[RMDB]
RNA sequence: GGGAACGACUCGAGUAGAGUCGAAAAAAUUGUGGCUGCCUCCUUGGGAAGCUGUGGAGCUAGAAUGAGCCCUCAGAGUCAUUCUCAGUUGGAUUCAGAAGGCUAGGCCUCUAAAACACCAAAUUGCUCUGUUCUUUGAUGUGGGUCACUCUGGAAACAUAAAAUCCCUGUUCGCAGGGAUUUUAUGAAAAGAAACAACAACAACAAC
Reactivity to DMS in 0.01 (KOAc 150mM, MgCl2 10mM, bicine 150mM(pH8.5), 24C), signal-to-noise 1, nucleotides 027 to 156: a060a050u000u020g000u000g000g040c000u020g000c030c030u000c050c030u000u040g010g000g020a130a040g010c030u010g030u010g020g010a050g000c040u000a130g000a090a090u000g000a070g050c000c020c030u020c030a130g000a080g020u000c000a030u000u000c030u000c020a200g020u000u010g020g030a130u000u010c040a080g010a080a110g030g020c020u010a100g070g010c020c030u000c030u000a100a100a100a110c070a030c060c040a060a120a060u000u000g020c020u000c070u000g000u000u010c020u000u010u010g040a080u010g030u000g030g030g040u010c030a060c090u010c020u010g030g010a190a130a260
Reactivity to 2A3 in 0.01 (KOAc 150mM, MgCl2 10mM, bicine 150mM(pH8.5), 24C), signal-to-noise 1, nucleotides 027 to 156: a010a000u130u080g010u050g030g000c000u010g050c000c000u040c000c010u000u050g100g000g000a010a030g060c020u010g050u100g000g000a060g000c010u040a080g140a130a220u100g000a100g040c000c000c050u050c060a010g000a000g130u070c010a060u030u000c020u040c030a040g080u080u050g030g050a090u160u050c020a080g050a270a020g100g000c020u090a060g020g130c060c000u000c010u050a050a120a010a010c090a030c000c060a040a050a110u080u050g010c000u010c010u050g080u200u050c010u020u180u010g070a110u040g070u050g100g120g000u110c080a030c000u000c050u070g070g040a090a010a000